This 177-nucleotide RNA was probed chemically with DMS and 2A3. The data come from the RNA Mapping Database (RMDB), library OK2TST. The reactions ran in a buffer of 150 mM KOAc, 10 mM MgCl2 and 150 mM bicine (pH 8.5), at 24 C. For DMS, 2,505 sequencing reads were counted.
RNA sequence: GGGAACGACUCGAGUAGAGUCGAAAAUCGGCGACCAUCUGCAUAUCCACGAGCUUGAAAGCAGCAAUAUUGAAGGAACGAACCGGGUCGAGGUCAGCGCGACCGUGCGCGCCGAUCAGCGUCAGGAACGAUAUUACCCGUUCGCGGGUAAUAUCGUAAAAGAAACAACAACAACAAC
Reactivity to DMS in 0.01 (KOAc 150mM, MgCl2 10mM, bicine 150mM(pH8.5), 24C), signal-to-noise 3, nucleotides 027 to 126: u020c020g000g030c020g000a110c050c020a040u000c050u000g020c050a070u000a110u010c050c030a100c050g000a040g020c050u010u010g000a040a110a110g000c050a050g030c110a120a080u000a120u020u010g020a100a090g000g010a050a080c090g010a120a090c050c030g010g010g010u000c010g020a070g000g020u010c030a070g000c010g030c000g010a080c090c050g000u000g000c010g020c000g040c010c010g020a030u000c060a090g000c050g000u000c020a120g020g020a160
Reactivity to 2A3 in 0.01 (KOAc 150mM, MgCl2 10mM, bicine 150mM(pH8.5), 24C), signal-to-noise 2, nucleotides 027 to 126: u040c010g030g000c000g060a040c020c010a030u070c000u080g000c030a040u030a030u160c010c000a040c040g040a020g050c040u010u070g110a070a060a010g000c030a010g000c040a020a080u100a150u190u140g090a080a020g060g010a070a030c060g020a020a040c010c020g040g020g020u060c020g010a040g000g050u060c020a010g010c010g000c000g000a050c070c000g010u060g010c030g000c010g000c040c010g000a010u000c020a020g010c010g020u040c000a040g080g070a020
Record summary
For 2A3 the reverse transcriptase was SuperScript II with manganese.